[RMDB]
Chemical mapping of a 177-nucleotide RNA with 2A3 and DMS. For DMS the reverse transcriptase was MarathonRT. For DMS, 1,138 sequencing reads were counted.
RNA sequence: GGGAACGACUCGAGUAGAGUCGAAAAGACACCGCGCAGAUCCCAAUGGCGGCUAAUAACGCCAAAAUAAAUGCGCGUAAAUGGCGUAAAAUAAAGACACAAUAUAAGUGAAAGCCGCCAAAGCAAAAUACAUUAGCGAAUUCGUUCGCUAAUGUAUAAAAGAAACAACAACAACAAC
Reactivity to 2A3 in 0.01 (KOAc 150mM, MgCl2 10mM, bicine 150mM(pH8.5), 24C), signal-to-noise 1, nucleotides 027 to 126: g030a030c030a010c030c070g000c000g000c020a020g020a120u040c000c010c000a040a030u050g000g000c010g000g020c010u070a180a100u080a170a000c000g000c000c000a000a140a020a050u090a010a080a030u120g010c000g000c000g000u000a030a010a090u040g010g020c000g010u000a000a080a110a040u190a050a220a040g130a010c000a000c000a090a010u180a050u060a300a000g000u000g050a110a030a030g000c030c000g030c010c030a020a000a000g000c020a000a130a060
Reactivity to DMS in 0.01 (KOAc 150mM, MgCl2 10mM, bicine 150mM(pH8.5), 24C), signal-to-noise 2, nucleotides 027 to 126: g000a100c190a080c180c000g010c000g020c010a120g000a070u000c000c000c020a120a180u000g000g000c000g000g000c040u000a130a090u000a020a020c020g010c000c000a010a020a130a050u030a040a080a130u010g000c000g000c020g010u020a040a130a100u000g020g000c000g000u020a110a040a110a160u010a040a060a150g010a260c020a000c020a030a100u020a230u000a060a100g010u000g000a110a290a040g000c010c020g050c000c020a040a060a110g000c130a080a060a170